[RMDB]
RNA sequence: GGGAACGACUCGAGUAGAGUCGAAAAGAUUCAUUCACGUCUGGCGACAACACCGAAAUAUCAAGAUGCCUGCAGUUGGAAAGAUAGAUCGCAGACUUGUCCUUCUUAUCUGCCACCGACGUCAACAAUUGUUAACUGGGUUCGCCCAGUUAACAAUAAAAGAAACAACAACAACAAC
Reactivity to 2A3 in 0.01 (KOAc 150mM, MgCl2 10mM, bicine 150mM(pH8.5), 24C), signal-to-noise 2, nucleotides 027 to 126: g000a040u130u100c030a000u200u040c050a030c050g030u000c070u050g080g030c010g050a070c070a120a010c010a030c050c020g060a070a130a000u150a050u110c030a040a090g020a140u080g020c040c000u040g000c010a080g070u070u120g040g060a090a100a050g040a010u080a020g110a050u030c040g010c130a030g000a080c030u000u020g040u030c010c040u060u050c000u070u090a100u050c040u030g020c020c020a020c000c060g040a050c010g030u040c020a010a000c040a020
Reactivity to DMS in 0.01 (KOAc 150mM, MgCl2 10mM, bicine 150mM(pH8.5), 24C), signal-to-noise 3, nucleotides 027 to 126: g020a170u000u010c040a100u000u010c080a070c080g020u010c000u010g020g010c020g000a100c080a050a090c070a050c090c040g010a100a090a150u010a070u010c050a070a120g000a120u010g000c060c030u030g050c010a060g000u020u000g010g010a040a040a060g010a040u000a050g030a080u000c080g010c110a110g020a070c080u010u010g020u010c020c030u010u010c000u000u010a070u010c080u010g000c060c090a050c030c060g000a040c090g000u000c130a040a090c150a110
This 177-nucleotide RNA was probed chemically with 2A3 and DMS. For DMS the reverse transcriptase was MarathonRT.